Chemical mapping of a 207-nucleotide RNA with DMS and 2A3. Values are in units of 0.01, from 0 to 300, in steps of 10. For DMS, 2,016 sequencing reads were counted. Conditions: 150 mM KOAc, 10 mM MgCl2 and 150 mM bicine (pH 8.5), 24 C. Reactivities are given for positions 27 through 156. Source: RMDB library RNAMAK, as collected in RNAgym.
[RMDB]
RNA sequence: GGGAACGACUCGAGUAGAGUCGAAAAAAUCAUUCGUGAUUUAUGAAGCGUACUACUAGACAUGCUUGUGGAGUACGAGCGAUAAGUCCCAAAUAGGACUUUUGACGCUUGAAACACAAGCAACAGCUAGUAUCGCCGUGGGGGGCUUCGGCCCCAAUGAAUUGUAGCGUUUCGACGCUACAAUUCAAAAAGAAACAACAACAACAAC
Reactivity to DMS in 0.01 (KOAc 150mM, MgCl2 10mM, bicine 150mM(pH8.5), 24C), signal-to-noise 1, nucleotides 027 to 156: a020a010u000c000a060u010u010c160g080u010g010a030u010u000u000a150u020g050a080a080g000c020g070u010a130c140u010a020c020u030a030g040a100c050a300u020g010c000u000u000g050u000g020g020a180g080u000a210c230g020a040g000c000g040a160u000a040a030g050u000c000c000c020a050a110a190u010a050g000g000a010c000u000u000u000u000g010a220c060g000c000u020u000g010a300a120a190c030a000c020a000a000g020c010a020a020c080a160g020c050u020a000g020u000a040u000c020g010c000c030g000u000g030g030g040g000g040g010c050u000u010c110g020g030c000c000c000c000a010a030
Reactivity to 2A3 in 0.01 (KOAc 150mM, MgCl2 10mM, bicine 150mM(pH8.5), 24C), signal-to-noise 2, nucleotides 027 to 156: a000a000u040c010a020u140u070c150g140u070g030a060u040u070u170a200u300g160a160a030g000c030g020u160a000c010u000a000c000u010a060g090a150c070a100u020g020c010u000u000g010u000g000g000a020g030u010a080c150g000a000g000c000g050a030u000a040a000g000u000c040c000c050a090a160a080u300a040g010g010a000c000u010u010u010u150g190a060c040g000c020u000u030g000a030a030a000c000a010c000a020a000g000c000a000a000c000a000g060c010u000a000g000u030a000u170c010g000c000c010g010u160g030g080g000g000g000g000c000u100u060c190g090g000c040c050c000c000a000a000